[RMDB]
RNA sequence: GGGAACGACUCGAGUAGAGUCGAAAACAAAAACCAAAACCUGGAAAAGAAAAUCCAGGACCAACGAACAAACCGUGAAAGACGCGAAGCACGCAAGAACGCGUCCACGGAACUUGCGUGAACAAAAACGGAUAAUAUAUUUCGAUAUAUUAUCCGUAAAAGAAACAACAACAACAAC
Reactivity to 2A3 in 0.01 (KOAc 150mM, MgCl2 10mM, bicine 150mM(pH8.5), 24C), signal-to-noise 5, nucleotides 027 to 126: c010a010a090a010a010a030c040c030a030a110a030a090c000c000u020g020g100a030a110a110a040g230a080a190a090a060u010c000c000a000g000g010a010c020c040a030a030c020g080a030a050c010a070a030a080c010c000g010u020g050a240a120a050g030a010c000g020c000g020a030a040g160c060a060c130g130c070a070a050g070a140a000c000g000c000g010u000c000c010a000c010g000g030a010a020c000u010u010g000c010g020u040g070a100a030c040a050a080a040a000
Reactivity to DMS in 0.01 (KOAc 150mM, MgCl2 10mM, bicine 150mM(pH8.5), 24C), signal-to-noise 3, nucleotides 027 to 126: c070a130a110a120a160a110c030c040a110a050a080a220c020c000u000g020g000a020a020a080a190g020a200a140a140a090u010c000c030a000g030g000a100c180c140a060a060c140g020a140a130c160a030a030a090c020c000g000u020g000a170a140a140g020a040c010g040c020g010a090a150g020c110a040c110g000c140a110a070g000a040a100c000g000c040g000u010c040c040a020c030g000g000a030a030c120u010u000g000c040g020u010g010a070a100c110a030a060a030a080
Chemical mapping of a 177-nucleotide RNA with 2A3 and DMS. For DMS, 4,384 sequencing reads were counted. For DMS the reverse transcriptase was MarathonRT. The reactions ran in a buffer of 150 mM KOAc, 10 mM MgCl2 and 150 mM bicine (pH 8.5), at 24 C. For 2A3, 5,828 sequencing reads were counted. It was measured as part of the RMDB library OK1LIB.